[RMDB]
RNA sequence: GGGAACGACUCGAGUAGAGUCGAAAAUACAAUGGUUAUCGACGGAAAAGCGAUCGGAGUUGCUCUCAGCGCAUCGCUCAACACCAGGAACACCAUGGAUGGAAUCCGUUAUGAGCAAGAAUGGGGACUGAUAACUUCUUUUCGAAGAAGUUAUCAGAAAAGAAACAACAACAACAAC
Reactivity to 2A3 in 0.01 (KOAc 150mM, MgCl2 10mM, bicine 150mM(pH8.5), 24C), signal-to-noise 9, nucleotides 027 to 126: u200a020c070a060a090u100g080g010u130u070a060u100c040g040a030c030g070g030a090a090a040a000g030c010g020a020u020c030g050g020a050g040u100u120g080c040u030c000u000c120a060g100c020g010c090a030u020c020g020c020u020c030a060a060c020a030c040c020a020g050g030a060a040c060a020c080c020a060u060g040g030a060u050g020g040a090a040u010c020c000g010u040u070a100u200g040a030g030c050a070a040g060a110a060u110g010g000g010g030a010
Reactivity to DMS in 0.01 (KOAc 150mM, MgCl2 10mM, bicine 150mM(pH8.5), 24C), signal-to-noise 8, nucleotides 027 to 126: u040a090c120a090a080u020g010g010u000u010a080u010c040g030a090c060g010g000a040a090a120a080g000c020g000a020u000c020g000g000a060g010u020u030g000c130u030c010u000c030a080g010c070g020c120a020u000c050g020c020u010c060a080a120c150a090c030c020a060g000g010a090a110c180a080c050c030a030u010g000g000a080u000g000g000a070a200u010c030c000g000u000u010a060u010g010a030g000c050a050a050g000a060a050u020g000g000g000g010a280
The data come from the RNA Mapping Database (RMDB), library OK1LIB.
The record gives the reactivity of an RNA of 177 nucleotides to 2A3 and DMS.
Conditions: 150 mM KOAc, 10 mM MgCl2 and 150 mM bicine (pH 8.5), 24 C.